[RMDB]
RNA sequence: GGGAACGACUCGAGUAGAGUCGAAAAGACAAUAGCGUAGGGAACCAAGCAAAGAGGUAAGAAAUCCCACGGUAGAAGGCUUGGUUCUAGCCGUGGGAAGAAGAAGUCCCACUCCCUACGCGGAUAAGAAUUACUAAGACUUCGGUCUUAGUAAUUCAAAAGAAACAACAACAACAAC
Reactivity to DMS in 0.01 (KOAc 150mM, MgCl2 10mM, bicine 150mM(pH8.5), 24C), signal-to-noise 5, nucleotides 027 to 126: g000a130c150a100a090u010a090g000c010g010u000a010g000g000g000a030a080c010c010a060a050g000c090a130a100a120g010a080g010g010u000a090a080g000a060a100a070u000c000c000c000a000c010g000g000u000a040g000a040a020g000g010c060u010u010g000g010u000u000c130u000a040g040c000c010g020u000g000g000g010a020a040g010a070a050g010a120a100g000u010c010c000c020a300c060u000c000c000c000u000a000c010g030c010g000g000a050u010a090a100
Reactivity to 2A3 in 0.01 (KOAc 150mM, MgCl2 10mM, bicine 150mM(pH8.5), 24C), signal-to-noise 3, nucleotides 027 to 126: g090a010c060a070a190u090a140g000c000g000u000a000g000g000g000a020a020c010c000a020a010g020c030a040a120a110g190a120g070g020u130a140a030g060a130a080a010u020c010c000c000a000c000g000g000u050a100g050a140a000g050g010c050u030u050g010g000u040u030c010u020a010g000c000c000g010u000g000g000g010a000a010g020a010a000g020a000a000g030u020c000c000c000a010c030u000c000c000c010u000a000c000g000c010g000g000a050u120a070a060